[RMDB]
RNA sequence: GGGAACGACUCGAGUAGAGUCGAAAACGCACUGAGUUCGCUCUCGCUGCUUGAUCGAGAGUGACUCUGUCGGCCUGGGAGCGUCUCCGACCCAGUGUCCGGCAUCGUUGAGGAGACUUGCCGGUCAGAUCAGGCCACAGGAUCUGACUGGGACAUGCCUUUCAAAGAAGUUCGCUUCUUUGAAAGGAAAAGAAACAACAACAACAAC
Reactivity to 2A3 in 0.01 (KOAc 150mM, MgCl2 10mM, bicine 150mM(pH8.5), 24C), signal-to-noise 5, nucleotides 027 to 156: c060g040c030a040c130u060g010a010g000u240u210c000g000c010u000c000u010c000g020c060u170g040c070u220u240g110a150u230c000g000a000g000a000g000u010g000a000c000u000c000u000g010u000c000g000g010c010c000u010g010g010g000a020g030c110g030u000c000u000c000c000g000a010c000c000c000a010g000u000g060u090c000c000g010g000c020a110u130c050g040u020u140g080a030g030g010a010g000a010c000u010u280g000c010c000g000g000u000c000a000g000a010u000c010a040g140g120c070c000a070c030a050g120g010a000u000c000u000g000a000c000u010g010g000g000a040c030a080u080g020
The data come from the RNA Mapping Database (RMDB), library RSTRND. Structure probing data (2A3) for a 207-nucleotide construct. The reactions ran in a buffer of 150 mM KOAc, 10 mM MgCl2 and 150 mM bicine (pH 8.5), at 24 C.